An RNA of 177 nucleotides, treated with DMS and 2A3 and read out base by base. The RNA was probed in 150 mM KOAc, 10 mM MgCl2 and 150 mM bicine (pH 8.5) at 24 C. Values cover nucleotides 27 to 126. 2A3 adducts were read by reverse transcription with SuperScript II with manganese.
RNA sequence: GGGAACGACUCGAGUAGAGUCGAAAACAGGAGAGAACCAUUACGCAUUAUUAUGGCGUCUCUAAGCUGGUUAACCAAUAUAUCGUUUUUGAUGAAACGGGCCACAAUUAAUGCUAAACGUAAUUACAGGAUAGGGAUGAUUCGUCAUCCCUAUCCUAAAAGAAACAACAACAACAAC
Reactivity to DMS in 0.01 (KOAc 150mM, MgCl2 10mM, bicine 150mM(pH8.5), 24C), signal-to-noise 3, nucleotides 027 to 126: c050a030g010g000a060g020a050g010a300a130c050c010a060u020u040a110c140g010c010a090u000u000a030u000u000a020u020g030g010c090g000u000c000u000c000u000a080a090g000c010u040g000g030u000u010a110a200c010c040a130a080u010a080u020a080u030c060g030u000u000u000u000u020g000a200u050g020a030a040a030c070g000g020g010c100c060a060c120a030a060u050u020a000a010u030g000c070u000a070a060a170c180g000u020a050a050u010u020a050c300
Reactivity to 2A3 in 0.01 (KOAc 150mM, MgCl2 10mM, bicine 150mM(pH8.5), 24C), signal-to-noise 4, nucleotides 027 to 126: c000a010g090g030a000g050a020g010a000a020c000c000a020u020u020a050c080g000c020a050u020u080a010u050u020a040u030g010g060c140g130u020c000u000c010u050a070a100g160c020u010g000g040u020u080a070a040c000c040a050a000u150a030u050a030u070c070g000u000u020u000u070u110g190a110u120g010a040a000a000c020g020g010g020c020c000a100c030a090a020u150u120a020a010u040g010c060u070a060a100a010c020g090u090a030a110u090u210a050c090